[RMDB]
RNA sequence: GGGAACGACUCGAGUAGAGUCGAAAAAGCUAGGAAGUAUGCCGAUGCCAUGUGUGGGUUGAACCCAGAGUGUUGGAACCAGAUGUAUGACAAAUAUGUCUAUUCACAGUGUGAGGCGAUGCGUGAAUCUACCUCUGAGCUUCGGCUCAGAGGUAGAAAAAGAAACAACAACAACAAC
Reactivity to 2A3 in 0.01 (KOAc 150mM, MgCl2 10mM, bicine 150mM(pH8.5), 24C), signal-to-noise 2, nucleotides 027 to 126: a000g300c260u250a110g010g120a100a010g100u000a020u180g000c010c000g020a020u090g070c060c030a120u030g050u000g000u020g060g000g120u000u210g060a130a060c020c000c000a010g000a000g060u050g040u020u090g000g000a020a020c030c030a200g000a070u060g070u000a070u080g250a060c030a010a090a060u170a100u170g080u000c070u000a050u070u090c050a050c080a230g000u000g000u000g110a030g010g010c000g000a030u120g030c000g060u030g000a010a030
Reactivity to DMS in 0.01 (KOAc 150mM, MgCl2 10mM, bicine 150mM(pH8.5), 24C), signal-to-noise 2, nucleotides 027 to 126: a070g000c050u000a040g010g010a040a100g030u010a060u000g000c020c000g000a090u030g030c000c030a000u000g010u070g010u020g000g000g050u010u010g020a090a300c140c060c020a100g000a060g010u000g020u070u020g000g000a040a050c130c060a010g030a020u000g020u000a020u000g000a070c270a030a100a000u010a040u020g000u000c020u000a090u010u040c090a060c080a010g000u020g010u000g000a080g000g000c000g000a010u000g020c060g020u010g010a040a070